[RMDB]
RNA sequence: GGGAACGACUCGAGUAGAGUCGAAAACCUGUAAUCCAAGCUACUGGGAGGCUGAGGCUGGCGGACCGCUUGAGCUCAGGGGUUCUGGGCUGCAGUGGACUAUGCCGAUCGGGUGUCCGCACUAAGUUCGGUAUCGAUAUGGUGCUCCUGGGGGAGCGCUAACGUGUAAGUUCGCUUACACGUUAGCAAAAGAAACAACAACAACAAC
Reactivity to DMS in 0.01 (KOAc 150mM, MgCl2 10mM, bicine 150mM(pH8.5), 24C), signal-to-noise 2, nucleotides 027 to 156: c010c010u000g000u010a120a120u000c040c030a090a110g010c040u000a100c050u000g010g030g000a080g040g020c020u020g020a090g030g010c040u000g060g020c050g010g000a090c000c020g030c020u000u000g000a050g020c010u010c010a040g020g010g020g000u010u010c020u010g010g000g000c030u000g010c050a080g020u000g020g010a100c010u000a110u010g020c020c000g000a060u000c030g020g020g030u000g000u010c050c070g000c030a090c050u010a120a130g000u000u000c000g030g030u000a070u010c080g000a080u000a140u000g020g010u010g000c020u000c000c000u030g040g010g010g010g000a150g020c090
Reactivity to 2A3 in 0.01 (KOAc 150mM, MgCl2 10mM, bicine 150mM(pH8.5), 24C), signal-to-noise 4, nucleotides 027 to 156: c020c010u030g080u140a070a060u070c070c030a080a020g020c010u080a050c020u070g010g030g020a030g030g000c020u030g020a010g070g010c030u050g040g010c020g020g020a030c000c020g030c070u080u120g120a000g010c010u000c020a030g000g060g050g010u250u110c010u020g010g000g000c000u060g010c010a010g010u030g010g010a020c020u050a040u090g010c010c000g010a020u030c040g020g030g000u030g020u010c020c040g020c030a010c050u100a180a120g040u050u030c010g000g020u050a040u100c030g020a050u030a090u280g050g000u050g090c010u010c010c010u030g000g010g000g000g020a020g020c050